[RMDB]
RNA sequence: GGGAACGACUCGAGUAGAGUCGAAAAAAGCCAUGAUGAGGGCAUUGGUUGGUGUAACCUUUGAAACGCUCCCAUGCUUCACAGAAGCUUUCACCAGUCUUCUGUGAGAAACCAGAAAUCUCAUUUCGGAGUCUAAAAGAAGCGAUUCGUCGCUUCAUCUAACUAUUCAGUUCGCUGAAUAGUUAGAAAAAGAAACAACAACAACAAC
Reactivity to 2A3 in 0.01 (KOAc 150mM, MgCl2 10mM, bicine 150mM(pH8.5), 24C), signal-to-noise 5, nucleotides 027 to 156: a000a000g060c050c020a040u060g020a040u030g000a040g000g010g020c020a020u050u080g030g020u030u080g020g020u050g020u070a080a100c030c000u070u030u150g140a130a130a020c050g000c020u030c000c000c010a010u040g020c000u050u030c000a010c000a000g010a020a000g000c000u060u120u170c090a100c040c020a040g060u090c010u010u010c000u000g000u010g000a010g020a030a010a010c020c010a020g070a030a080a040u080c060u020c040a050u030u060u080c070g030g030a060g030u060c060u150a040a150a050a070g040a010a000g000c000g030a010u080u090c170g050u010c000g060c000u000u000c000a000
Reactivity to DMS in 0.01 (KOAc 150mM, MgCl2 10mM, bicine 150mM(pH8.5), 24C), signal-to-noise 2, nucleotides 027 to 156: a070a080g000c010c040a050u000g030a110u000g040a030g070g000g010c020a120u000u000g030g010u000u000g000g020u000g050u000a100a070c060c020u000u000u000g010a110a080a100c070g000c020u000c010c000c010a140u000g000c090u000u000c010a060c020a000g020a080a030g040c050u000u000u000c210a160c190c140a110g020u000c020u010u000c000u010g030u000g000a040g000a110a100a070c030c050a140g000a070a060a090u000c040u010c040a090u000u000u010c110g000g010a200g020u010c070u000a020a040a110a150g000a020a020g030c000g030a080u000u000c290g020u000c020g020c000u010u000c000a080
Structure probing data (2A3 and DMS) for a 207-nucleotide construct. The data come from the RNA Mapping Database (RMDB), library RFM130. DMS adducts were read by reverse transcription with MarathonRT. Conditions: 150 mM KOAc, 10 mM MgCl2 and 150 mM bicine (pH 8.5), 24 C. The 2A3 profile rests on 3,374 reads.